[RMDB]
RNA sequence: GGGAACGACUCGAGUAGAGUCGAAAAAUGACACACUCCAGGCGUGAAAGACCGCUGAUAAAAGUGUCCGCACCCCCUAACGGGUUACAAGUAGGGGAGGGCGAAAGUGGGUACAAGUGGGGUGCUAUCUUACCUAUAACUUCGGUUAUAGGUAAGAAAAAGAAACAACAACAACAAC
Reactivity to DMS in 0.01 (KOAc 150mM, MgCl2 10mM, bicine 150mM(pH8.5), 24C), signal-to-noise 9, nucleotides 027 to 126: a090u020g010a060c060a050c010a070c070u010c120c140a220g000g000c030g010u010g000a150a140a080g000a130c100c010g000c010u000g000a150u020a070a080a100a080g000u000g000u000c060c180g010c020a030c010c010c000c010c070u010a080a070c090g000g000g010u010u050a060c260a090a100g010u030a090g000g000g000g000a110g000g010g000c060g000a040a080a070g010u010g000g000g000u010a060c150a040a090g010u020g010g000g000g020u000g000c020u010a070
Reactivity to 2A3 in 0.01 (KOAc 150mM, MgCl2 10mM, bicine 150mM(pH8.5), 24C), signal-to-noise 9, nucleotides 027 to 126: a010u100g000a010c000a000c000a010c030u050c040c030a030g010g010c010g000u030g040a060a020a000g150a050c150c020g000c010u000g000a010u130a050a090a010a010g010u010g000u000c000c030g010c000a030c000c000c010c000c000u020a100a030c050g040g000g030u050u150a080c090a150a030g060u120a100g080g020g030g100a200g040g010g000c080g050a090a030a010g070u110g010g010g010u080a070c040a130a050g020u120g090g000g000g000u010g000c000u020a050